This 207-nucleotide RNA was probed chemically with 2A3 and DMS.
Conditions: 150 mM KOAc, 10 mM MgCl2 and 150 mM bicine (pH 8.5), 24 C.
Values are in units of 0.01, from 0 to 300, in steps of 10.
For 2A3, 3,507 sequencing reads were counted.
2A3 adducts were read by reverse transcription with SuperScript II with manganese.
RNA sequence: GGGAACGACUCGAGUAGAGUCGAAAAUCGAGUGAUGAUGCCGAAUUGCAAAGAUUCGACGUUGUUCUGGUUCCAGUCACUUCCGCCCGGCGCUUGCUCGAACGAUGCCUGAUAAUACUUGUACGACUCGGUGAGCGGUACCUGAAUUUCAGUCGGCCCAUUCUUUACAUUUCGAUGUAAAGAAUGGAAAAGAAACAACAACAACAAC
Reactivity to 2A3 in 0.01 (KOAc 150mM, MgCl2 10mM, bicine 150mM(pH8.5), 24C), signal-to-noise 5, nucleotides 027 to 156: u040c010g000a010g030u070g040a060u020g020a050u070g010c000c010g050a040a060u130u080g000c110a130a100a040g060a150u070u110c030g010a020c040g020u050u050g020u060u100c060u080g020g030u110u040c060c000a010g020u040c020a010c070u080u010c040c020g040c000c040c000g020g000c010g000c050u040u080g000c020u020c050g010a030a030c020g070a060u140g030c010c030u030g090a030u060a210a060u110a160c030u050u070g020u050a050c020g050a050c050u020c070g050g060u060g030a020g030c030g050g030u040a070c000c010u050g070a110a130u080u140u150c070a060g050u050c020g050g000c000
Reactivity to DMS in 0.01 (KOAc 150mM, MgCl2 10mM, bicine 150mM(pH8.5), 24C), signal-to-noise 2, nucleotides 027 to 156: u000c020g010a120g040u000g020a070u010g000a080u010g030c000c000g040a010a020u000u020g070c080a200a160a280g000a050u010u000c000g010a020c000g020u000u020g030u000u000c070u010g020g010u020u000c030c040a160g000u010c030a060c050u010u000c030c010g010c040c000c030g030g020c020g020c040u000u000g050c040u000c020g020a080a150c050g020a090u000g030c020c010u020g020a130u010a060a110u000a080c070u010u010g020u000a060c000g030a040c010u000c030g020g030u010g000a070g040c010g020g020u000a040c030c000u000g000a110a080u010u010u010c050a100g020u000c050g020g020c100